[RMDB]
RNA sequence: GGGAACGACUCGAGUAGAGUCGAAAAGUGCAGCAGUGUGGAGACCUGUUGUAAUACCUUCGUCACAUAUGCGGGCGUCGGUGAGCUGCGCAGUUAGCGGAUGCUGUGCGCGGCAGAGUCGGAGAUAGGUCUAUGAGAAGUUCGCUUCUCAUAGACCAAAAGAAACAACAACAACAAC
Reactivity to DMS in 0.01 (KOAc 150mM, MgCl2 10mM, bicine 150mM(pH8.5), 24C), signal-to-noise 2, nucleotides 027 to 126: g000u000g000c000a030g010c000a040g000u040g010u010g000g020a180g000a050c130c000u000g010u000u010g000u000a060a050u030a070c020c000u000u000c030g030u000c020a020c040a140u050a280u030g040c130g000g000g000c000g000u000c100g000g000u020g000a230g010c010u010g000c000g000c000a000g000u050u040a030g000c000g020g010a100u090g050c000u000g000u000g000c000g010c000g000g040c000a100g000a050g000u000c000g000g000a070g010a120u030a080
Reactivity to 2A3 in 0.01 (KOAc 150mM, MgCl2 10mM, bicine 150mM(pH8.5), 24C), signal-to-noise 7, nucleotides 027 to 126: g080u050g000c020a010g000c000a010g010u040g010u060g250g100a070g050a050c000c010u010g000u030u000g020u040a070a040u100a060c000c000u020u050c010g010u020c010a040c050a120u250a100u300g080c220g000g000g000c000g030u010c010g000g020u090g030a030g010c020u010g010c020g000c010a040g060u120u140a010g000c040g140g150a130u300g010c000u000g010u010g010c020g000c000g010g000c010a000g000a000g060u020c010g020g000a070g010a050u160a120